Chemical mapping of a 207-nucleotide RNA with 2A3.
RNA sequence: GGGAACGACUCGAGUAGAGUCGAAAAGUCCCCAGUAUGACGUUAAACUGCUGACUCAUACAUACUGACACCGGUUGCUCAACAGUCUGUGUGGGACAAUAGAAUAACAAGGCUGUCAAUUUGAGCUAAAACUCCUCGGGGUUCGCCCCGAGGAGAACCAACCGUUCAAGUUCGCUUGAACGGUUGGAAAAGAAACAACAACAACAAC
Reactivity to 2A3 in 0.01 (KOAc 150mM, MgCl2 10mM, bicine 150mM(pH8.5), 24C), signal-to-noise 2, nucleotides 027 to 156: g040u000c020c000c000c000a000g010u050a000u080g020a000c070g000u020u040a080a100a030c010u060g050c030u030g100a060c020u020c010a020u020a070c000a010u090a020c010u030g050a030c000a040c060c090g230g030u080u070g000c000u010c030a020a000c000a010g010u010c020u020g110u020g000u010g090g040g020a010c010a000a050u110a190g130a040a060u120a060a000c010a060a010g090g000c000u020g050u130c050a040a100u040u060u110g000a010g000c000u030a090a060a000a010c000u000c000c010u010c000g000g010g000g000u030u070c110g080c000c000c000c000g000a000g000g000a000g000a000a000
The reactions ran in a buffer of 150 mM KOAc, 10 mM MgCl2 and 150 mM bicine (pH 8.5), at 24 C. For 2A3 the reverse transcriptase was SuperScript II with manganese.